Notes:
Structure probing data (DMS and 2A3) for a 207-nucleotide construct. Source: RMDB library VIROID, as collected in RNAgym. DMS adducts were read by reverse transcription with MarathonRT. The DMS profile rests on 2,407 reads. Reactivities are given for positions 27 through 156. The 2A3 profile rests on 1,486 reads. The reactions ran in a buffer of 150 mM KOAc, 10 mM MgCl2 and 150 mM bicine (pH 8.5), at 24 C.
RNA sequence: GGGAACGACUCGAGUAGAGUCGAAAAUUUUCCUUCGGGAACCAAGCGGUUGGUUCCGAGGGGGGUGUGAUCCAGGUACCGCCGUAGAAACUGGAUUACGACGCCUACCCGGGAUUCAAACCCGGUCCCCCUCAGAGGUGACUCUGAGUGAAAGGUCGAAGUGAUAGUAGUUCGCUACUAUCACUUCAAAAGAAACAACAACAACAAC
Reactivity to DMS in 0.01 (KOAc 150mM, MgCl2 10mM, bicine 150mM(pH8.5), 24C), signal-to-noise 1, nucleotides 027 to 156: u000u000u000u000c000c020u010u000c080g030g060g000a020a030c010c010a020a150g040c130g010g050u010u000g010g030u010u000c000c000g010a060g020g000g020g010g040g000u000g050u000g050a020u020c020c000a030g040g020u000a140c050c040g060c040c230g010u010a150g020a090a140a220c050u000g000g000a080u010u000a040c010g010a080c090g000c030c030u000a100c110c010c020g040g000g000a120u030u010c130a120a200a170c010c010c000g010g000u000c020c000c050c050c000u000c000a010g020a030g000g000u000g010a300c030u000c010u000g000a050g000u010g000a090a140a100g010g020u020c130
Reactivity to 2A3 in 0.01 (KOAc 150mM, MgCl2 10mM, bicine 150mM(pH8.5), 24C), signal-to-noise 1, nucleotides 027 to 156: u070u060u010u050c000c000u040u050c050g070g000g090a070a080c010c000a030a030g030c040g030g040u030u010g000g000u010u000c000c000g010a050g010g020g000g000g010g020u090g000u000g020a010u000c010c010a010g020g030u040a060c010c050g040c020c060g100u210a060g050a140a300a040c030u000g000g000a000u000u010a010c000g050a000c050g090c050c040u080a090c050c000c010g000g020g000a090u300u180c150a080a110a160c000c000c000g000g010u020c000c000c000c000c000u000c000a010g000a000g000g010u070g030a050c000u000c000u000g020a010g030u120g080a130a070a070g080g000u110c090